This 207-nucleotide RNA was probed chemically with 2A3 and DMS. 2A3 adducts were read by reverse transcription with SuperScript II with manganese. DMS adducts were read by reverse transcription with MarathonRT. The reactions ran in a buffer of 150 mM KOAc, 10 mM MgCl2 and 150 mM bicine (pH 8.5), at 24 C. For 2A3, 1,898 sequencing reads were counted. Reactivities are given for positions 27 through 156.
RNA sequence: GGGAACGACUCGAGUAGAGUCGAAAAUAUCGAUUAUUGCAUCAUCCUAAUAAAGUUUCCAUUUAAUUCUAGAUUAUACACAAUUUUCAAGUACGAUUCUGAAACGUGAAUCAAUUUCGACGACAUGCACAAUUGCACGAUCUCGAAAAUGACGUUAUCGUGAGAAUAUUUUCGAAUAUUCUCACGAAAAAGAAACAACAACAACAAC
Reactivity to 2A3 in 0.01 (KOAc 150mM, MgCl2 10mM, bicine 150mM(pH8.5), 24C), signal-to-noise 4, nucleotides 027 to 156: u100a020u030c050g040a020u030u060a070u150u230g040c020a030u050c010a050u050c030c020u110a150a130u080a140a120a010g040u010u030u030c020c010a050u040u070u270a140a090u110u070c040u050a020g020a100u070u100a060u300a080c050a000c040a120a090u080u070u120u130c030a100a000g080u070a050c050g020a090u060u000c020u090g050a130a010a000c040g030u060g080a030a050u020c010a030a040u020u000u020c020g010a030c040g010a020c020a010u020g020c010a050c030a240a300u180u110g000c010a000c080g060a230u030c000u000c020g020a020a010a020a040u040g050a010c020g010u040u090a020
Reactivity to DMS in 0.01 (KOAc 150mM, MgCl2 10mM, bicine 150mM(pH8.5), 24C), signal-to-noise 2, nucleotides 027 to 156: u000a100u000c050g010a200u000u000a050u000u000g000c040a090u010c060a110u000c040c060u010a100a100u000a090a100a240g000u000u000u000c000c040a230u000u000u000a070a080u000u020c020u010a080g030a050u010u000a090u000a080c020a070c100a090a200u010u000u000u000c070a100a220g010u010a040c010g000a040u000u000c020u000g020a030a070a070c090g040u000g010a130a020u000c000a070a130u000u000u000c000g010a050c010g050a030c020a000u000g030c040a090c080a070a100u000u000g000c030a010c020g000a090u010c000u000c010g050a000a040a010a130u000g000a040c050g020u010u000a090